[RMDB]
RNA sequence: GGGAACGACUCGAGUAGAGUCGAAAAGGCAGGAGUAGAAUGGGCCGACACUAGGGUCUCACUGCAGGCCAGAUGCUACUUUUGUUUGGCGCACGGUUUGGUGAUUGAUCCGGUGGUGUUGUCCGCGCAAUAUUUUAUAAUUCGUUAUAAAAUAUUGAAAAGAAACAACAACAACAAC
Reactivity to 2A3 in 0.01 (KOAc 150mM, MgCl2 10mM, bicine 150mM(pH8.5), 24C), signal-to-noise 9, nucleotides 027 to 126: g090g020c050a020g010g110a050g050u130a050g070a210a070u120g020g010g000c020c020g030a000c000a000c010u110a130g020g000g000u000c000u000c010a030c020u160g050c030a020g040g010c000c000a020g030a100u070g010c020u030a070c000u150u160u160u270g190u110u120u130g050g000c020g000c020a040c060g010g000u030u030u080g020g000u020g010a080u080u140g010a000u020c010c010g030g080u110g010g010u020g010u010u030g000u000c010c010g010c010g000
Reactivity to DMS in 0.01 (KOAc 150mM, MgCl2 10mM, bicine 150mM(pH8.5), 24C), signal-to-noise 9, nucleotides 027 to 126: g010g000c030a070g010g010a090g010u020a050g010a100a090u020g000g000g010c040c030g020a090c030a020c040u000a110g030g000g010u000c010u010c010a020c020u010g010c110a050g020g000c010c000a080g010a130u030g010c020u010a040c080u010u030u040u030g000u020u030u010g010g000c050g020c090a150c140g000g010u000u010u010g010g010u000g000a060u020u040g000a020u000c010c010g000g020u010g000g010u000g010u000u000g000u010c020c030g000c190g010